[RMDB]
RNA sequence: GGGAACGACUCGAGUAGAGUCGAAAAAACACUAAGAGUGCGUAGAGGGAGGCCCCUGCCAGAGGUCAGGUAGUUAGGCUGGUGGAUUUCAUGGAGCAUGUGAAAGGAGAAGCCAUCCUGGGCGAGGCCUCCUCUCUUAUUUCGAUAAGAGAGGAGGAAAAGAAACAACAACAACAAC
Reactivity to 2A3 in 0.01 (KOAc 150mM, MgCl2 10mM, bicine 150mM(pH8.5), 24C), signal-to-noise 2, nucleotides 027 to 126: a010a000c100a030c050u120a120a030g070a020g120u070g030c030g030u060a030g040a090g080g020g010a010g000g060c000c000c000c030u030g020c010c030a070g030a050g100g040u080c010a010g010g050u040a010g040u150u060a020g020g000c020u010g000g020u070g000g050a060u030u080u000c050a050u080g100g030a080g040c050a060u140g030u040g100a060a050a040g090g070a110g070a070a010g020c030c000a020u030c000c010u020g010g040g020c040g010a020g040g040
Reactivity to DMS in 0.01 (KOAc 150mM, MgCl2 10mM, bicine 150mM(pH8.5), 24C), signal-to-noise 6, nucleotides 027 to 126: a060a050c070a070c080u010a100a100g020a100g010u000g010c050g020u000a080g020a100g010g000g020a070g010g000c030c020c030c020u010g010c030c040a120g000a090g010g020u000c050a050g010g020u000a050g020u000u000a070g010g010c030u000g020g030u000g000g000a090u000u000u000c050a050u010g010g010a100g020c100a070u000g010u000g010a030a050a050g010g000a120g000a140a120g000c030c020a050u000c020c010u000g010g010g010c040g010a090g000g000